Source information:
Structure probing data (2A3 and DMS) for a 207-nucleotide construct. For 2A3, 2,879 sequencing reads were counted.
[RMDB]
RNA sequence: GGGAACGACUCGAGUAGAGUCGAAAAACAAGCUGGACAUCGAGGUCGUAAGAGCUCCGCAUGAUGACGGCCACAGUACAGGUGCCCCUCGUGGUAGAAGUAGAUGAGGUUUAUGAGGCCCUGGCCACAGGCCUGGCAAGCAAAGCAGGGUCUGUGAGGUAUUACCAUUAUUCGUAAUGGUAAUACCAAAAGAAACAACAACAACAAC
Reactivity to 2A3 in 0.01 (KOAc 150mM, MgCl2 10mM, bicine 150mM(pH8.5), 24C), signal-to-noise 4, nucleotides 027 to 156: a000c040a020a010g020c020u030g020g040a070c020a060u050c060g070a080g030g080u040c040g050u080a130a050g020a020g120c050u050c040c020g080c080a100u120g010a030u060g020a040c020g000g000c010c010a080c020a020g070u130a060c020a010g040g000u070g090c010c010c020c010u010c020g000u070g060g060u110a090g010a210a010g040u130a030g010a100u080g010a040g040g010u080u170u150a100u210g020a090g010g000c010c010c000u030g040g010c000c000a010c000a000g000g000c000c010u010g000g000c030a060a090g080c060a160a070a030g000c010a070g010g010g000u000c010u000g000u000g000a050
Reactivity to DMS in 0.01 (KOAc 150mM, MgCl2 10mM, bicine 150mM(pH8.5), 24C), signal-to-noise 2, nucleotides 027 to 156: a080c040a050a140g000c020u010g030g000a170c030a040u010c050g000a080g040g050u000c010g040u120a120a200g000a200g000c010u020c010c040g030c070a140u000g000a100u000g010a110c030g000g030c010c020a130c070a040g020u000a060c040a120g000g030u010g030c000c020c020c010u010c050g040u030g050g050u000a070g000a100a120g050u000a100g000a110u010g000a090g000g030u010u000u000a110u020g000a130g000g010c010c020c000u000g000g040c020c000a000c040a040g000g000c000c020u000g000g000c010a050a100g030c170a090a060a160g030c010a040g050g010g010u000c010u000g020u000g000a060

Reactivities are rounded to 0.1 and cut off at 0 and 3. The RNA was probed in 150 mM KOAc, 10 mM MgCl2 and 150 mM bicine (pH 8.5) at 24 C. For DMS the reverse transcriptase was MarathonRT.